RNA sequence: GGGAACGACUCGAGUAGAGUCGAAAACGCAAAGCUGCAGCGCGGCGCUCUGGACGCCUUGCCCCGCGCACUGCUCUUUACAUGGCCCGACGUGAGGGCACUUCGCGGGCAGUGCUGCGGCCUCGUGAAACUGCCCCUAAGUUCGCUUAGGGGCAAAUAGCAUGAUUUUGUUCGCAAAAUCAUGCUAAAAAGAAACAACAACAACAAC
Reactivity to 2A3 in 0.01 (KOAc 150mM, MgCl2 10mM, bicine 150mM(pH8.5), 24C), signal-to-noise 1, nucleotides 027 to 156: c060g020c020a030a080a010g000c000u020g000c020a000g000c020g040c050g010g030c030g020c040u040c100u240g150g070a140c020g000c000c000u030u040g020c030c010c020c020g000c000g000c020a040c010u000g000c000u000c000u060u090u260a070c050a090u150g080g000c030c040c090g080a120c050g020u020g000a030g000g020g070c010a000c010u030u030c000g000c000g030g020g000c010a010g000u060g060c000u010g000c000g020g000c000c000u010c000g000u010g040a070a040a010c050u040g000c000c000c000c000u000a010a010g020u020u120c140g050c180u000u000a000g000g000g000g040c000a000a000a000

The record gives the reactivity of an RNA of 207 nucleotides to 2A3. For 2A3, 917 sequencing reads were counted. The reactions ran in a buffer of 150 mM KOAc, 10 mM MgCl2 and 150 mM bicine (pH 8.5), at 24 C. 2A3 adducts were read by reverse transcription with SuperScript II with manganese.